[RMDB]
RNA sequence: GGGAACGACUCGAGUAGAGUCGAAAAGAAGUCCGACACGCUGUCGCGGGGCGAUUUAGCACCUUUCCCGGGAAAGGACCCGGUGCGAUUUAGGCACAUUUAUUAGAUCAGUGCCGAUCUAAAGAAAAGUCAUUACCGUGUUCGCACGGUAAUGACUAAAAGAAACAACAACAACAAC
Reactivity to 2A3 in 0.01 (KOAc 150mM, MgCl2 10mM, bicine 150mM(pH8.5), 24C), signal-to-noise 1, nucleotides 027 to 126: g040a020a000g040u010c010c020g020a050c000a020c100g150c060u100g020u140c030g000c070g040g010g000g040c000g010a020u050u070u160a040g000c030a060c000c000u060u020u060c000c000c060g090g000g020a060a050a030g030g030a010c000c000c000g000g000u000g040c020g000a000u030u040u100a070g010g050c010a020c010a020u180u150u110a300u100u140a210g050a130u110c100a050g010u000g100c010c000g000a010u020c010u030a070a080a040g160a020a110a010
Reactivity to DMS in 0.01 (KOAc 150mM, MgCl2 10mM, bicine 150mM(pH8.5), 24C), signal-to-noise 2, nucleotides 027 to 126: g000a140a170g020u010c020c020g020a090c100a170c040g010c130u000g000u000c120g000c080g030g000g020g040c030g000a120u000u000u000a060g000c030a080c030c020u000u020u000c040c010c020g010g030g010a120a150a160g010g010a220c000c020c030g040g010u000g000c020g010a110u000u000u000a120g010g020c000a010c040a150u000u010u000a100u030u000a090g000a040u010c070a090g010u000g000c060c040g010a040u000c010u000a020a040a210g010a060a060a070
Structure probing data (2A3 and DMS) for a 177-nucleotide construct. DMS adducts were read by reverse transcription with MarathonRT.